[RMDB]
RNA sequence: GGGAACGACUCGAGUAGAGUCGAAAAGGGGUCAGGGCGACUUGGAUUUAUGUUGCUUUUGACGAGCUGAAGCCUCCACGGCUCGAUAAGCAACAUUGUCAGUCGUGCCUGACGGAGGCACCCAAAAGACGUGUCAGCGUUCGCGCUGACACGUCAACGUACGUUGAUCCUUCGGGAUCAACGUACGAAAAGAAACAACAACAACAAC
Reactivity to 2A3 in 0.01 (KOAc 150mM, MgCl2 10mM, bicine 150mM(pH8.5), 24C), signal-to-noise 1, nucleotides 027 to 156: g210g000g030g000u030c020a000g000g010g000c030g000a030c070u240u300g130g010a160u300u300u020a130u210g000u000u000g040c000u140u090u150u300g300a110c060g030a000g000c000u000g040a090a000g050c000c000u000c000c070a070c010g000g030c000u010c010g090a110u070a080a000g000c010a020a010c000a040u030u130g050u020c020a000g010u010c020g010u010g300c020c000u000g000a000c010g000g000a000g000g040c000a200c010c040c020a110a130a000a010g000a000c000g000u000g000u000c010a000g000c030g040u080u190c300g010c000g000c090u000g000a000c000a000c000g000u000c000a000a000